[RMDB]
RNA sequence: GGGAACGACUCGAGUAGAGUCGAAAAGAAGAGAAGCUUGGGGUAUUAAUCUUAGAGCUAUUAGAGAAGGUCUAUCAUGGGUCAUUUGUAAAUGCCAGUCUCAGUCACAUUAAGCUCUGUAGGGAGACUGGAAACUUUCUGAGUAAAAGUGCACCAGCAAUUAUCUAUGCUUCGGCAUAGAUAAUUGAAAAGAAACAACAACAACAAC
Reactivity to 2A3 in 0.01 (KOAc 150mM, MgCl2 10mM, bicine 150mM(pH8.5), 24C), signal-to-noise 2, nucleotides 027 to 156: g040a030a000g040a010g030a060a020g010c050u090u080g020g010g000g000u140a110u130u170a190a050u130c040u060u130a040g020a000g060c030u060a100u150u160a070g030a000g000a060a040g020g010u040c070u100a040u080c070a070u110g000g020g020u020c030a040u040u040u130g060u080a090a080a030u080g080c010c010a010g030u000c000u000c010a110g100u130c030a020c000a120u150u150a040a050g020c020u020c030u100g050u030a070g060g020g040a010g000a000c000u000g000g000a020a000a000c010u050u140u040c050u080g100a100g030u080a000a110a030a000g040u030g010c040a000c010c000a020g020
Reactivity to DMS in 0.01 (KOAc 150mM, MgCl2 10mM, bicine 150mM(pH8.5), 24C), signal-to-noise 1, nucleotides 027 to 156: g010a170a060g010a110g010a160a090g030c060u000u000g000g010g010g010u010a050u000u000a070a130u010c040u000u000a080g010a070g020c050u000a110u000u000a080g030a110g010a090a070g020g030u000c010u000a090u000c020a080u020g000g020g000u000c030a110u000u000u020g000u000a050a040a040u000g020c020c000a060g020u000c000u000c000a300g010u000c050a040c050a150u000u000a080a140g050c090u000c020u010g000u000a140g010g030g000a060g020a030c010u000g030g000a030a040a050c070u000u000u010c030u000g010a220g000u000a080a030a060a090g000u000g000c040a110c010c050a060g000